Chemical mapping of a 207-nucleotide RNA with 2A3 and DMS. 2A3 adducts were read by reverse transcription with SuperScript II with manganese. For 2A3, 2,970 sequencing reads were counted. For DMS, 2,825 sequencing reads were counted. DMS adducts were read by reverse transcription with MarathonRT. 2A3 is a SHAPE reagent: it acylates the 2'-hydroxyl of flexible nucleotides of all four kinds. Source: RMDB library M2RFPK, as collected in RNAgym.

[RMDB]
RNA sequence: GGGAACGACUCGAGUAGAGUCGAAAAAUGUGCGGCAAAGAAACAUUGUUUAUGCAAAGGCACUUCGCAAUCUGUGCUCAAACAUUGCUUAUUCAAACACGCUUCACAAUGUGCGACAAAGAAACAUAAAACGUUUAGUACUUCGGUACUAAACGAAGUCAGAAACUAACUUCGGUUAGUUUCUGACAAAAGAAACAACAACAACAAC
Reactivity to 2A3 in 0.01 (KOAc 150mM, MgCl2 10mM, bicine 150mM(pH8.5), 24C), signal-to-noise 4, nucleotides 027 to 156: a000u070g020u040g020c030g000g000c040a070a050a070g080a070a110a040c030a040u040u000g020u030u080u100a090u070g010c030a000a040a070g020g000c000a000c000u080u070c130g010c140a040a100u040c030u040g020u010g020c010u060c160a040a100a040c040a090u000u050g000c020u090u080a070u100u070c040a010a060a050c050a030c120g000c000u060u040c020a000c000a030a090u090g030u060g100c040g040a030c070a010a120a010g150a050a100a010c060a040u150a090a080a050a010c000g000u000u000u000a000g000u000a000c010u000u020c150g070g000u000a000c000u000a000a000a010c000g000a020a000
Reactivity to DMS in 0.01 (KOAc 150mM, MgCl2 10mM, bicine 150mM(pH8.5), 24C), signal-to-noise 2, nucleotides 027 to 156: a090u010g020u000g000c010g020g030c130a120a170a080g000a160a040a010c010a070u000u000g020u000u000u010a070u020g030c030a050a120a040g050g030c030a080c100u010u000c180g000c110a100a080u000c080u000g030u010g000c000u000c050a050a070a040c000a020u000u010g000c050u000u000a070u000u020c100a070a050a110c030a070c070g000c130u010u000c100a070c050a100a060u010g010u000g000c000g010a140c060a050a070a100g020a130a120a050c070a100u000a050a000a140a200c010g040u000u000u000a020g030u000a000c000u000u010c300g100g010u000a000c000u000a010a000a050c030g000a020a040